The record gives the reactivity of an RNA of 177 nucleotides to DMS and 2A3. Source: RMDB library M2PK50, as collected in RNAgym. For 2A3, 34,179 sequencing reads were counted. The RNA was probed in 150 mM KOAc, 10 mM MgCl2 and 150 mM bicine (pH 8.5) at 24 C.

RNA sequence: GGGAACGACUCGAGUAGAGUCGAAAAUCCUUCCUUUUCGAAGGAAGGACAGUGCACAGUCUUCGCAACUGUGAAUCACACAACAGCCGUGUCUAUGCGAGGUUUUAAUCAAGUUCGCUUGAUUAAAUAUAGUACGAUUAUUCGUAAUCGUACUAUAAAAAGAAACAACAACAACAAC
Reactivity to DMS in 0.01 (KOAc 150mM, MgCl2 10mM, bicine 150mM(pH8.5), 24C), signal-to-noise 9, nucleotides 027 to 126: u000c000c000u000u000c000c000u000u000u000u010c170g020a020a010g000g010a020a000g000g010a010c110a050g010u000g010c010a020c010a010g010u000c050u010u000c060g020c050a170a070c010u000g010u000g000a090a040u010c180a250c030a050c050a090a090c150a120g010c030c020g010u010g010u000c120u010a070u010g010c010g000a030g010g010u010u000u000u000a000a010u000c010a000a010g010u000u010c190g020c010u000u000g000a010u000u000a000a020a060
Reactivity to 2A3 in 0.01 (KOAc 150mM, MgCl2 10mM, bicine 150mM(pH8.5), 24C), signal-to-noise 9, nucleotides 027 to 126: u010c000c000u010u010c000c000u060u050u030u100c250g130a010a000g000g000a000a000g000g000a000c020a020g040u030g000c010a000c000a010g000u000c040u080u050c110g000c030a020a020c000u010g000u010g020a030a070u110c030a010c000a000c010a110a140c020a070g090c020c030g130u100g050u040c080u150a110u100g010c010g010a020g040g020u020u060u010u040a000a000u010c000a010a010g010u030u070c140g060c090u000u010g000a000u010u000a000a020a000